[RMDB]
RNA sequence: GGGAACGACUCGAGUAGAGUCGAAAAGUCUCACUCUCAGUGUGAGAGAGAGUCUGUCACAGUCACAGACAGUGUCUGAGUGACUGUCUCAGUCUCUCACUGUCUCUGAGACUGUCAGACUGAGAGAACUUAGCUCGCGUUUCGACGCGAGCUAAGUAAAAGAAACAACAACAACAAC
Reactivity to 2A3 in 0.01 (KOAc 150mM, MgCl2 10mM, bicine 150mM(pH8.5), 24C), signal-to-noise 1, nucleotides 027 to 126: g070u000c000u030c000a040c020u000c000u000c010a040g050u080g030u040g250a090g020a000g000a000g010a000g040u000c000u020g050u020c020a000c000a020g000u000c010a000c000a030g030a000c040a080g290u100g020u160c050u070g090a080g120u030g020a030c010u000g040u050c010u010c000a010g010u000c000u000c020u000c010a040c020u050g030u010c000u010c050u140g120a100g010a080c010u030g140u060c010a060g020a080c000u010g020a000g000a000g010a060
Reactivity to DMS in 0.01 (KOAc 150mM, MgCl2 10mM, bicine 150mM(pH8.5), 24C), signal-to-noise 1, nucleotides 027 to 126: g000u000c000u000c010a300c020u000c000u030c010a040g010u020g010u000g020a050g020a040g040a040g030a030g050u000c030u010g030u000c140a040c000a000g000u000c010a090c020a080g010a010c000a170g000u020g000u000c040u000g000a090g010u020g000a020c020u010g000u000c050u000c010a000g010u000c000u000c000u000c020a300c070u010g020u000c040u010c210u000g000a070g000a000c000u010g000u000c060a070g000a000c020u000g010a070g010a020g000a100